An RNA of 207 nucleotides, treated with 2A3 and DMS and read out base by base. For 2A3, 4,337 sequencing reads were counted. For DMS the reverse transcriptase was MarathonRT. 2A3 is a SHAPE reagent: it acylates the 2'-hydroxyl of flexible nucleotides of all four kinds.
[RMDB]
RNA sequence: GGGAACGACUCGAGUAGAGUCGAAAAGUGUGCUAUACUAGUAAGGUUGAAUGAAUCAACCCUUGGUGCUUAGCUUCUUUCACCAAGCAUAUUACACGCGGAUAACCGCCAUAGGAGAAAAGAUGAACUGCCCGACGAUUCUUCGGAAUCGUCGGAACUAUUUCACCAAGUUCGCUUGGUGAAAUAGAAAAGAAACAACAACAACAAC
Reactivity to 2A3 in 0.01 (KOAc 150mM, MgCl2 10mM, bicine 150mM(pH8.5), 24C), signal-to-noise 6, nucleotides 027 to 156: g060u040g020u020g030c040u070a050u040a230c070u060a060g130u130a120a100g020g010u010u010g030a110a200u150g060a080a100u070c010a010a010c000c010c000u020u010g010g010u010g020c070u070u050a060g020c000u110u090c000u030u080u030c000a010c000c000a000a000g010c020a030u060a040u170u140a060c040a010c080g010c020g030g000a070u050a240a160c030c010g030c050c020a070u120a070g070g060a070g040a060a120a030a010g050a050u090g040a080a050c050u120g040c010c000c000g000a000c000g000a000u000u000c000u030u060c190g040g000a000a000u000c000g000u000c000g000g000a000a000
Reactivity to DMS in 0.01 (KOAc 150mM, MgCl2 10mM, bicine 150mM(pH8.5), 24C), signal-to-noise 3, nucleotides 027 to 156: g030u010g030u000g020c030u000a130u000a110c070u000a090g010u000a100a080g020g000u000u000g010a080a180u010g010a200a270u000c020a020a050c010c020c040u000u010g000g000u000g010c100u000u010a090g020c060u010u000c050u000u010u000c040a070c000c010a040a080g030c030a110u010a050u000u000a050c050a080c040g030c040g010g020a200u010a110a110c030c010g050c050c030a220u000a120g000g000a160g010a070a070a070a080g010a120u010g010a010a050c090u000g000c130c000c000g020a030c000g000a040u000u000c010u000u000c300g050g000a030a020u000c000g030u000c000g010g010a010a020